[RMDB]
This 177-nucleotide RNA was probed chemically with 2A3 and DMS. For 2A3 the reverse transcriptase was SuperScript II with manganese. Conditions: 150 mM KOAc, 10 mM MgCl2 and 150 mM bicine (pH 8.5), 24 C.
RNA sequence: GGGAACGACUCGAGUAGAGUCGAAAAUUAGAUCUGCAGGGUUAGUGCUCUGGCUACUGCACAGAAACGUAACCGGUAUAAUAGGAUAUGAAAAUGAGUUUAUAUGUAGUCUAGGUAACUAGGCUACUGUGUAAGAAUUAUUCGUAAUUCUUACACAAAAAGAAACAACAACAACAAC
Reactivity to 2A3 in 0.01 (KOAc 150mM, MgCl2 10mM, bicine 150mM(pH8.5), 24C), signal-to-noise 9, nucleotides 027 to 126: u100u040a020g050a080u030c030u050g000c020a020g050g000g020u040u080a040g030u070g160c050u010c020u080g010g010c020u200a260c020u150g000c020a040c010a110g090a040a080a000c040g030u040a040a040c020c000g010g030u140a100u050a160a130u110a070g050g040a040u060a070u200g150a060a060a030a080u180g030a030g100u090u130u080a200u050a060u160g000u010a000g000u000c000u000a000g000g040u040a150a080c000u000a000g000g000c000u000a000c000
Reactivity to DMS in 0.01 (KOAc 150mM, MgCl2 10mM, bicine 150mM(pH8.5), 24C), signal-to-noise 9, nucleotides 027 to 126: u010u020a070g000a080u010c070u010g010c050a070g010g010g010u000u000a050g020u010g010c140u010c020u000g010g000c020u000a090c130u010g010c030a060c080a080g000a050a090a080c060g010u010a050a070c030c020g000g020u000a050u010a070a080u010a100g010g010a080u000a040u010g000a040a060a080a080u020g000a120g000u010u000u010a050u010a070u020g000u000a010g010u000c000u000a000g000g000u030a080a120c000u000a000g000g000c000u000a000c000